[RMDB]
RNA sequence: GGGAACGACUCGAGUAGAGUCGAAAACGCGAGGGAGUCAAGGACGCCCGGCAUCAGAGGAUUGCACGCCACCGGUAUCACGGAGGGCAACUGCUUUCCAGGCUGGCAGGUAACGUUCCUGCCCUUGGGGACUGAUUUUUGGUUCGCCUGGUCCGUGGACAUCCAAUUUGUUCGCAAAUUGGAUGUCAAAAGAAACAACAACAACAAC
Reactivity to DMS in 0.01 (KOAc 150mM, MgCl2 10mM, bicine 150mM(pH8.5), 24C), signal-to-noise 1, nucleotides 027 to 156: c100g010c070g020a080g000g000g000a110g030u000c020a100a110g000g080a020c050g040c050c020c020g020g010c020a090u010c050a170g010a220g030g000a090u010u020g000c000a090c140g010c020c020a090c060c000g030g000u000a120u010c110a080c040g030g020a180g020g000g000c000a030a080c040u020g010c080u000u040u000c000c010a070g010g000c000u030g000g030c010a030g000g020u000a110a210c250g000u000u000c000c010u000g000c000c000c000u000u010g000g020g020g020a070c060u000g000a170u000u000u020u000u000g000g010u150u010c120g020c040c020u000g020g010u000c020c010g020u020g000
Reactivity to 2A3 in 0.01 (KOAc 150mM, MgCl2 10mM, bicine 150mM(pH8.5), 24C), signal-to-noise 4, nucleotides 027 to 156: c070g010c050g030a070g000g040g010a050g050u080c090a150a050g070g000a030c020g060c000c000c000g030g010c030a050u080c040a020g070a060g080g020a040u060u090g010c050a010c160g010c010c010a030c020c040g030g050u140a090u230c030a020c060g010g000a060g060g000g000c010a020a020c010u050g010c030u000u010u000c000c000a000g020g020c060u070g020g000c010a010g000g030u090a190a090c100g130u200u080c020c000u000g020c000c000c000u030u030g010g010g000g020a020c030u050g100a270u070u060u040u160u300g040g010u010u030c030g050c030c010u060g040g030u000c020c000g020u060g020
This 207-nucleotide RNA was probed chemically with DMS and 2A3. As a SHAPE reagent, 2A3 marks flexible, mostly unpaired nucleotides at the ribose 2'-OH. It was measured as part of the RMDB library VIROID. For 2A3 the reverse transcriptase was SuperScript II with manganese. Reactivities are given for positions 27 through 156. Conditions: 150 mM KOAc, 10 mM MgCl2 and 150 mM bicine (pH 8.5), 24 C.